Overview
The record gives the reactivity of an RNA of 177 nucleotides to 2A3. 2A3 adducts were read by reverse transcription with SuperScript II with manganese. It was measured as part of the RMDB library OK1LIB.
RNA sequence: GGGAACGACUCGAGUAGAGUCGAAAACGCAGACGCAGAGCACCAGGGUCGGGGUGGUUGCCGAGUCGGGGCCCGACGAACGACGGGUCGCGCUGGUUCCCAAGGCGGUCGCGUCGCUGGUGAACCGCUUAGCCACGGGGUUCGCCCCGUGGCUAAGAAAAGAAACAACAACAACAAC
Reactivity to 2A3 in 0.01 (KOAc 150mM, MgCl2 10mM, bicine 150mM(pH8.5), 24C), signal-to-noise 1, nucleotides 027 to 126: c090g000c020a040g060a050c020g040c050a000g040a010g030c030a000c040c000a070g090g100g030u030c010g000g100g020g000u070g030g200u020u080g030c010c000g070a030g040u090c100g000g000g100g050c000c010c010g000a000c010g030a160a000c020g010a020c070g010g000g010u000c000g000c020g000c160u020g010g050u000u010c000c000c000a000a000g000g000c030g000g070u090c080g000c030g190u080c000g000c020u000g000g000u030g030a060a020c020c080g000